Background:
Chemical mapping of a 177-nucleotide RNA with 2A3 and DMS. The reactions ran in a buffer of 150 mM KOAc, 10 mM MgCl2 and 150 mM bicine (pH 8.5), at 24 C.
RNA sequence: GGGAACGACUCGAGUAGAGUCGAAAACCCCUGAACGGGGUUGUCAGUAGUAGCUAUUAGUGGCAUCAGCUACUGCUGUAAACCCACAGUUCAGGAGAUUGGGGUCAGUGGCAGCGAGCACGGCUGCCCGGUGUGUGUGUUUCGACACACACACCGGAAAAGAAACAACAACAACAAC
Reactivity to 2A3 in 0.01 (KOAc 150mM, MgCl2 10mM, bicine 150mM(pH8.5), 24C), signal-to-noise 3, nucleotides 027 to 126: c000c010c010c000u020g000a010a000c020g000g000g000g000u000u000g060u010c000a000g000u000a000g020u000a000g020c030u010a040u170u070a250g070u080g120g030c020a050u050c060a080g000c020u000a000c000u000g010c000u000g000u000a040a020a000c000c000c020a060c030a040g000u000u000c000a000g060g010a040g010a030u150u180g040g030g000g040u080c070a070g050u070g050g030c000a000g020c010g040a040g120c140a030c140g100g000c020u010g000c000
Reactivity to DMS in 0.01 (KOAc 150mM, MgCl2 10mM, bicine 150mM(pH8.5), 24C), signal-to-noise 2, nucleotides 027 to 126: c000c010c000c000u000g000a000a010c000g000g000g020g010u000u000g000u000c040a000g010u010a000g000u000a000g020c010u000a200u030u030a090g020u000g000g010c100a050u010c160a050g000c000u000a010c000u000g000c000u000g000u020a060a040a000c000c000c000a090c060a190g050u000u000c000a000g000g000a050g010a060u020u020g000g020g000g000u010c080a040g000u000g010g000c020a010g000c000g000a240g020c120a050c100g000g020c010u000g000c030

2A3 adducts were read by reverse transcription with SuperScript II with manganese.